[RMDB]
Structure probing data (2A3 and DMS) for a 177-nucleotide construct.
The reactions ran in a buffer of 150 mM KOAc, 10 mM MgCl2 and 150 mM bicine (pH 8.5), at 24 C.
RNA sequence: GGGAACGACUCGAGUAGAGUCGAAAAGCUGAUCUGGCUGGCUAGGCGGUGUCCCCUUCCUCCCUCACCGCUCCAUGUGCGUCCCUCCCGAAGCUGCGCGCUCGGUCGAAGAGGACGACCAUCCCCGUCCAAAUAAAUCGUUCGCGAUUUAUUUGGAAAAAGAAACAACAACAACAAC
Reactivity to 2A3 in 0.01 (KOAc 150mM, MgCl2 10mM, bicine 150mM(pH8.5), 24C), signal-to-noise 7, nucleotides 027 to 126: g030c030u030g030a120u080c030u070g030g010c010u010g010g020c030u050a060g030g040c020g040g000u040g040u080c000c010c000c000u040u060c000c010u020c010c000c000u020c010a040c000c020g030c010u020c020c020a060u090g050u070g060c010g010u020c000c000c000u010c000c010c000g030a090a020g010c020u050g020c040g000c020g000c080u020c020g010g020u030c030g020a060a030g050a090g040g020a010c010g010a010c000c010a040u040c000c010c000c000g030
Reactivity to DMS in 0.01 (KOAc 150mM, MgCl2 10mM, bicine 150mM(pH8.5), 24C), signal-to-noise 6, nucleotides 027 to 126: g000c030u010g000a070u010c060u010g010g020c020u010g010g010c130u010a080g010g020c020g010g020u000g000u020c020c010c010c060u010u000c030c020u000c020c010c010u010c030a040c040c020g020c030u010c080c080a050u010g010u000g000c020g010u000c010c000c010u000c010c010c000g010a070a080g030c020u010g010c110g010c090g000c020u000c020g000g000u010c130g000a090a050g000a120g000g000a030c020g000a030c030c040a130u000c020c000c000c080g020
It was measured as part of the RMDB libraries RFM100 and RFMREP.